Description
The record gives the reactivity of an RNA of 177 nucleotides to DMS. It was measured as part of the RMDB library M2PK90. The reactions ran in a buffer of 150 mM KOAc, 10 mM MgCl2 and 150 mM bicine (pH 8.5), at 24 C.

RNA sequence: GGGAACGACUCGAGUAGAGUCGAAAAUUAAAGAGUUUCCAUUAACAAAUCCAGUAAUUGCGAUCGGGAAUACAACCUCCCAUCUUGGUUGUCUUAAAGGUUCCAUAGGAACCUGGAAGCUAAAAAAACACCCUAUUUAGUUCGCUAAAUAGGGUGUAAAAGAAACAACAACAACAAC
Reactivity to DMS in 0.01 (KOAc 150mM, MgCl2 10mM, bicine 150mM(pH8.5), 24C), signal-to-noise 1, nucleotides 027 to 126: u010u000a120a100a150g040a180g040u000u000u000c040c000a180u000u000a030a100c060a100a070a070u010c050c050a110g010u010a060a060u000u000g000c080g020a050u000c130g000g000g000a070a060u010a070c110a040a040c130c040u000c010c010c000a040u000c170u010u000g000g000u000u000g000u010c070u000u000a000a110a010g020g040u010u000c020c040a220u000a300g000g000a000a000c000c000u000g000g000a050a000g000c170u020a000a000a070a090a120a030